[RMDB]
This 207-nucleotide RNA was probed chemically with DMS and 2A3. For 2A3 the reverse transcriptase was SuperScript II with manganese. Reactivities are rounded to 0.1 and cut off at 0 and 3. For 2A3, 1,744 sequencing reads were counted.

RNA sequence: GGGAACGACUCGAGUAGAGUCGAAAAUGCAAGUAGUGCUAUUGUUGGAAUCACCGUACCUAUUUAGGUUUACGCUCCAAGAUCGGUGGAUAGCAGCCCUAUCAAUAUCUAGGCGAACUGUGCUAUGAAAACGGUAUUGGCUUCGGCCAAUACCGAACAUGUGGCAAAACUUCGGUUUUGCCACAUGAAAAGAAACAACAACAACAAC
Reactivity to DMS in 0.01 (KOAc 150mM, MgCl2 10mM, bicine 150mM(pH8.5), 24C), signal-to-noise 2, nucleotides 027 to 156: u000g020c060a080a100g010u000a090g020u000g020c050u000a060u000u010g020u010u000g000g010a180a080u010c000a040c070c020g000u010a000c020c040u000a180u010u000u010a010g020g010u000u000u010a070c060g000c080u000c050c000a080a130g000a040u010c010g030g020u000g000g010a060u000a040g000c030a130g040c050c050c010u000a160u000c060a120a150u010a120u000c160u000a050g020g030c020g020a060a020c020u010g030u010g040c030u030a040u000g000a050a050a080a140c010g010g040u010a020u000u020g010g000c000u000u010c300g070g050c000c000a020a030u010a000c000c000g020a020a040
Reactivity to 2A3 in 0.01 (KOAc 150mM, MgCl2 10mM, bicine 150mM(pH8.5), 24C), signal-to-noise 3, nucleotides 027 to 156: u130g030c100a090a050g040u080a010g060u090g070c030u070a040u040u100g090u000u070g030g050a030a070u100c000a010c030c010g030u040a010c000c020u040a180u170u180u300a070g000g030u010u060u030a050c060g030c060u030c020c040a060a030g020a130u090c040g020g010u010g030g040a030u010a010g010c020a020g000c000c000c000u070a050u090c040a090a000u020a040u220c040u060a020g030g000c020g050a040a040c050u080g000u020g090c020u060a040u210g080a000a020a030a050c000g000g010u000a000u000u000g000g020c010u020u050c160g000g000c000c000a000a000u000a000c000c000g000a010a000